[RMDB]
RNA sequence: GGGAACGACUCGAGUAGAGUCGAAAACAUCACGAAUGGGGAUUUUUGACUAUGAAACGGAAUGCGAAAACUAUCAUCGCAGGGAUGAUUGCACUGGCAAUUUCACACACCGCUAUGGCUGACGAUAGCGAUAUCGCGUAUUCGUACGCGAUAUCGCAAAAGAAACAACAACAACAAC
Reactivity to 2A3 in 0.01 (KOAc 150mM, MgCl2 10mM, bicine 150mM(pH8.5), 24C), signal-to-noise 2, nucleotides 027 to 126: c000a030u090c030a000c080g140a120a050u110g020g010g040g060a030u050u060u050u110u130g030a020c030u060a040u220g070a080a100a010c070g050g030a050a060u020g000c010g040a100a000a010a070c030u030a060u110c000a020u060c020g010c060a090g110g050g000a020u050g000a010u020u030g000c040a000c080u000g110g000c020a020a090u000u080u120c060a030c010a000c030a000c000c010g000c030u040a060u100g110g000c040u040g070a030c050g010a060u110a050
Reactivity to DMS in 0.01 (KOAc 150mM, MgCl2 10mM, bicine 150mM(pH8.5), 24C), signal-to-noise 2, nucleotides 027 to 126: c110a060u000c070a070c090g020a070a050u000g020g030g000g000a140u000u000u000u000u000g000a100c090u000a080u010g000a060a100a120c160g020g030a100a030u000g070c000g000a040a110a090a090c120u000a030u000c030a110u000c020g000c130a080g010g000g000a030u020g000a020u000u000g020c040a080c240u010g000g000c110a060a090u000u000u010c030a040c160a110c070a070c080c010g070c060u000a050u000g000g020c040u000g000a110c160g000a040u000a060